An RNA of 177 nucleotides, treated with 2A3 and read out base by base. It was measured as part of the RMDB library 15KREP.
[RMDB]
RNA sequence: GGGAACGACUCGAGUAGAGUCGAAAAGCAAUAUUAUUGCUACACGUCUAAGGACACUUUAGAUGAUAUCUUACAACAGGCUAAUAAGUCUGUUGGUAUUAUAUCUAUGCCUUUGGGAUAUGUGUCUGUACGAGGUAAUCUUCGGAUUACCUCGUACAAAAGAAACAACAACAACAAC
Reactivity to 2A3 in 0.01 (KOAc 150mM, MgCl2 10mM, bicine 150mM(pH8.5), 24C), signal-to-noise 1, nucleotides 027 to 126: g060c030a040a010u140a090u300u080a080u100u110g020c020u030a010c020a010c030g050u030c020u020a070a070g060g000a010c000a010c050u000u090u060a030g010a100u080g000a000u030a000u030c010u030u030a000c000a020a000c000a000g000g000c000u020a110a020u060a300a040g000u000c010u000g030u000u000g000g000u010a000u020u020a010u000a000u000c020u020a050u090g050c000c000u020u100u130g150g030g020a010u070a030u120g020u000g020u010c030u050